[RMDB]
RNA sequence: GGGAACGACUCGAGUAGAGUCGAAAAGGGAUUGGUAAAUGUGAUUUAAAUAAGUUGAUCGGGAGUAAGACUAUUGGUUAUUUCACUGGCGCUGAUGAUGCUACACCAAAAGGUUAUCAAUCUGUAAGAAGUGGUGGAUUUGGAAUGACUUUAGUUCACACAAGAUGUUGUUCGCAACAUCUUGUGUAAAAGAAACAACAACAACAAC
Reactivity to 2A3 in 0.01 (KOAc 150mM, MgCl2 10mM, bicine 150mM(pH8.5), 24C), signal-to-noise 4, nucleotides 027 to 156: g070g010g020a070u060u060g030g030u090a050a060a070u100g030u040g070a070u070u110u200a090a100a120u140a110a050g040u030u050g050a090u100c070g010g010g020a060g030u050a080a000g040a050c020u030a060u100u080g040g000u070u050a080u030u090u030c060a050c050u030g040g000c000g000c050u020g020a080u050g010a010u060g020c020u040a050c030a020c080c000a000a120a010a080g040g000u040u030a030u070c010a050a040u010c030u040g040u060a080a040g030a060a010g060u030g010g050u010g020g000a040u050u050u060g030g010a110a030u040g010a000c000u060u020u040a020g020u070u080c060
Reactivity to DMS in 0.01 (KOAc 150mM, MgCl2 10mM, bicine 150mM(pH8.5), 24C), signal-to-noise 2, nucleotides 027 to 156: g000g020g010a030u010u000g000g030u000a020a080a070u000g040u010g010a140u000u000u000a050a060a150u000a040a100g020u010u010g010a100u010c040g040g010g000a110g020u000a050a110g010a040c000u000a080u000u000g010g030u000u000a050u000u010u000c020a110c110u000g020g010c090g030c050u010g040a080u000g010a100u000g000c020u000a060c050a080c020c040a090a070a060a100g000g020u010u010a050u020c060a030a070u010c020u010g030u000a080a150g000a090a080g050u010g000g040u010g020g010a100u000u000u010g010g030a090a060u000g020a080c050u020u000u000a060g010u010u010c010